[RMDB]
Notes:
Structure probing data (DMS and 2A3) for a 177-nucleotide construct. DMS adducts were read by reverse transcription with MarathonRT. The RNA was probed in 150 mM KOAc, 10 mM MgCl2 and 150 mM bicine (pH 8.5) at 24 C. The 2A3 profile rests on 3,124 reads. For DMS, 2,521 sequencing reads were counted.
RNA sequence: GGGAACGACUCGAGUAGAGUCGAAAAGAAACACGAAAAGGAGCGCAUCCAGAUACACGAGGCUGCAGUGAAGGAAGCAGAGCGGCAAGCAUCAGAGUCCUUGCGGCUUGCAUCCAAGGAGCACAACGUACACAGGUCUAUUCGUAGACCUGUGUACAAAAGAAACAACAACAACAAC
Reactivity to DMS in 0.01 (KOAc 150mM, MgCl2 10mM, bicine 150mM(pH8.5), 24C), signal-to-noise 3, nucleotides 027 to 126: g000a100a090a080c090a070c110g000a070a060a100a070g020g020a090g020c090g000c100a030u000c020c050a070g000a110u000a060c070a060c060g020a110g010g020c070u000g000c030a050g010u000g020a090a110g030g000a030a050g010c030a020g010a030g010c030g030g020c030a000a040g030c080a150u010c130a140g000a110g000u010c190c010u000u000g010c040g000g010c020u010u010g000c040a070u000c010c000a100a030g010g000a090g000c040a070c100a050a060c160
Reactivity to 2A3 in 0.01 (KOAc 150mM, MgCl2 10mM, bicine 150mM(pH8.5), 24C), signal-to-noise 3, nucleotides 027 to 126: g010a010a050a000c050a000c040g030a050a060a030a100g050g040a030g000c070g000c050a020u030c040c000a010g020a090u140a050c060a010c060g000a060g050g000c020u030g000c020a040g020u040g150a140a070g040g020a030a010g000c020a010g000a010g240c060g070g010c040a020a000g000c010a020u160c090a050g080a040g250u070c000c000u030u030g010c030g100g000c000u010u050g030c000a000u000c020c010a030a050g060g000a040g070c030a020c020a120a050c110